About this RNA: Structure probing data (DMS) for a 177-nucleotide construct. The DMS profile rests on 1,621 reads. For DMS the reverse transcriptase was MarathonRT. The RNA was probed in 150 mM KOAc, 10 mM MgCl2 and 150 mM bicine (pH 8.5) at 24 C.

RNA sequence: GGGAACGACUCGAGUAGAGUCGAAAAGAUAUGGAACCAUCUAAUAAGACAGUCGAUCCAGAGCAAAAUGGUCGGAAACGACCAUUUUGCUCUGGACGACAAUGACGUUAGAGUGGUUCCUAAGUCAGAUAAAAUCUAAGUUCGCUUAGAUUUUAUCAAAAGAAACAACAACAACAAC
Reactivity to DMS in 0.01 (KOAc 150mM, MgCl2 10mM, bicine 150mM(pH8.5), 24C), signal-to-noise 2, nucleotides 027 to 126: g020a050u000a300u000g010g000a020a010c000c000a090u010c010u000a020a010u010a230a200g010a230c200a120g000u000c010g030a140u000c010c010a000g010a020g000c020a000a030a020a040u000g000g010u010c000g020g000a100a070a260c000g020a030c000c000a000u000u000u010u000g000c010u000c000u010g000g010a030c010g000a020c000a030a050u000g000a130c300g000u000u000a000g000a060g030u010g020g020u000u000c000c000u000a020a090g010u010c040a100